RNA sequence: GGGAACGACUCGAGUAGAGUCGAAAAUGAUGGCUGAUCACAUUCACUUUUGUUUUUUAUUUUUUGUCUCACUCUUUCACCCAGGCUGGAGUAUAGUGAUGCGAUCUCGGCUCACUGCAACCUCUGCAGCUCGUCACACGUUCGCGUGUGACGAGCUAAAAGAAACAACAACAACAAC
Reactivity to 2A3 in 0.01 (KOAc 150mM, MgCl2 10mM, bicine 150mM(pH8.5), 24C), signal-to-noise 2, nucleotides 027 to 126: u250g010a020u130g000g000c040u050g070a180u130c020a070c040a110u140u110c020a070c040u120u050u110u150g130u000u030u020u090u090u060a200u080u240u100u010u170u060g050u010c010u000c010a050c010u030c000u010u110u120c040a090c070c040c010a080g000g050c030u040g050g000a000g000u050a080u070a130g020u000g020a030u070g000c000g010a110u020c030u000c050g010g000c000u010c000a010c020u030g000c000a000a000c010c010u040c020u040g040c000
Chemical mapping of a 177-nucleotide RNA with 2A3. High 2A3 reactivity points to a flexible backbone, as in loops and unpaired stretches.